An RNA of 177 nucleotides, treated with 2A3 and DMS and read out base by base.
It was measured as part of the RMDB library OK2TST.
Values cover nucleotides 27 to 126.
The DMS profile rests on 22,677 reads.
For 2A3 the reverse transcriptase was SuperScript II with manganese.

RNA sequence: GGGAACGACUCGAGUAGAGUCGAAAAAAUCGGUUCAUGUCAAAGAAGGCGAAGCUAUCGCGAGCCAAGAUUUAUUGAUUGAAUUCGUGUAAUGCAUAAUAUGUAACGCAGGAUAAAUACAGGGUGAUACACUAAUCAGUUUCGACUGAUUAGUGUAAAAAGAAACAACAACAACAAC
Reactivity to 2A3 in 0.01 (KOAc 150mM, MgCl2 10mM, bicine 150mM(pH8.5), 24C), signal-to-noise 8, nucleotides 027 to 126: a000a010u070c020g010g000u020u020c020a050u150g050u060c010a030a010a050g070a050a020g040g000c020g050a060a010g000c030u100a090u300c110g000c020g010a010g000c000c010a020a000g020a020u090u160u140a110u070u060g030a010u000u020g020a030a040u160u250c030g000u040g020u100a110a060u070g000c010a000u060a130a090u130a250u190g080u070a050a010c040g000c040a020g010g070a070u070a120a110a020u130a070c060a020g030g010g030u050g030a010
Reactivity to DMS in 0.01 (KOAc 150mM, MgCl2 10mM, bicine 150mM(pH8.5), 24C), signal-to-noise 9, nucleotides 027 to 126: a070a040u000c030g010g010u000u000c020a030u010g030u000c030a020a040a190g010a160a130g010g010c010g000a130a180g000c020u000a100u010c190g010c020g000a300g010c020c010a060a110g010a170u000u000u010a090u010u000g000a030u000u000g000a030a040u000u010c020g020u000g000u000a070a100u010g000c040a040u000a060a070u010a300u000g010u010a050a070c120g010c040a040g010g000a090u000a030a050a070u000a060c090a050g000g000g010u000g010a180